The record gives the reactivity of an RNA of 177 nucleotides to 2A3 and DMS.
The data come from the RNA Mapping Database (RMDB), library OK2TST.
For 2A3, 1,176 sequencing reads were counted.
Conditions: 150 mM KOAc, 10 mM MgCl2 and 150 mM bicine (pH 8.5), 24 C.
DMS adducts were read by reverse transcription with MarathonRT.
High 2A3 reactivity points to a flexible backbone, as in loops and unpaired stretches.
For 2A3 the reverse transcriptase was SuperScript II with manganese.
RNA sequence: GGGAACGACUCGAGUAGAGUCGAAAAGCGUCACGGGGACGCCGCCAUUUCCUUGGUCAUGGCCGUCCGAGCCAGCUACAUGGAGGGUGGCGAGAUCGCCUUCACGGCGCUGCCACGCCAUAGCCGCGCCUUAGCGGACGUUCGCGUCCGCUAAGGCAAAAGAAACAACAACAACAAC
Reactivity to 2A3 in 0.01 (KOAc 150mM, MgCl2 10mM, bicine 150mM(pH8.5), 24C), signal-to-noise 1, nucleotides 027 to 126: g000c000g040u030c020a020c080g080g000g010g070a020c020g020c000c010g040c000c000a090u130u140u020c020c000u010u080g040g030u110c100a160u010g020g000c040c010g100u000c020c030g020a040g000c020c000a000g010c020u110a080c070a100u060g000g000a040g030g100g030u020g000g010c000g000a030g030a050u080c050g080c000c000u150u300c080a070c120g000g000c000g040c040u050g010c000c000a040c030g000c040c000a090u070a030g000c000c020g070c000
Reactivity to DMS in 0.01 (KOAc 150mM, MgCl2 10mM, bicine 150mM(pH8.5), 24C), signal-to-noise 1, nucleotides 027 to 126: g000c020g090u000c020a280c080g000g010g000g000a060c020g040c030c050g020c030c010a030u020u000u000c040c040u000u000g010g000u000c120a120u000g030g010c030c010g000u020c100c070g020a140g000c070c000a070g030c080u000a100c150a040u000g000g010a050g000g000g020u000g000g000c000g000a080g000a070u060c080g030c010c030u000u020c170a220c300g020g020c010g000c040u000g000c050c020a070c010g000c040c010a080u000a100g000c020c050g020c170